[RMDB]
This 207-nucleotide RNA was probed chemically with 2A3 and DMS. The reactions ran in a buffer of 150 mM KOAc, 10 mM MgCl2 and 150 mM bicine (pH 8.5), at 24 C. For DMS the reverse transcriptase was MarathonRT. Source: RMDB library RNAMAK, as collected in RNAgym.
RNA sequence: GGGAACGACUCGAGUAGAGUCGAAAAAGAUUUUCGAAUCUUAAUAUUCCUAAGUCUCUACGGUAAUACGUGAAGUCUUCUGAUGACCCAUCGGAAACGAUGGCAAGGAAGUCACACGUGCCAGUAGAGAUAUGGACCGUACAGGGUUCGCCCUGAAAUAACUUUUCCUUUUCGAAGGAAAAGUUAUAAAAGAAACAACAACAACAAC
Reactivity to 2A3 in 0.01 (KOAc 150mM, MgCl2 10mM, bicine 150mM(pH8.5), 24C), signal-to-noise 5, nucleotides 027 to 156: a000g030a020u050u070u100u210c160g070a050a020u000c010u070u120a180a100u090a200u300u080c020c000u040a150a050g020u000c000u000c000u000a010c000g020g010u070a180a120u090a300c000g030u020g070a200a080g030u010c000u010u000c000u010g210a300u080g020a070c000c000c000a000u000c000g000g030a080a050a010c000g000a000u000g010g000c010a040a050g000g000a000a000g020u010c020a020c000a000c100g020u000g020c000c020a030g000u000a020g000a000g000a000u010a010u020g000g000a020c030c080g040u160a080c030a010g030g000g010u040u060c120g100c020c010c000u020g030a150a150
Reactivity to DMS in 0.01 (KOAc 150mM, MgCl2 10mM, bicine 150mM(pH8.5), 24C), signal-to-noise 2, nucleotides 027 to 156: a030g000a070u000u000u000u010c140g020a050a000u000c010u000u000a090a140u000a100u000u000c000c000u000a110a220g020u000c010u000c030u000a050c000g010g040u010a100a110u010a070c030g040u000g020a120a180g000u000c000u000u000c000u000g000a080u030g010a070c300c010c010a020u000c000g010g010a220a090a160c020g000a000u000g000g000c020a080a120g000g000a030a020g010u010c020a300c020a010c000g050u000g030c080c000a160g050u020a010g000a020g020a020u000a020u000g000g030a060c130c070g030u000a140c070a060g000g000g000u010u010c110g020c040c020c010u000g030a050a120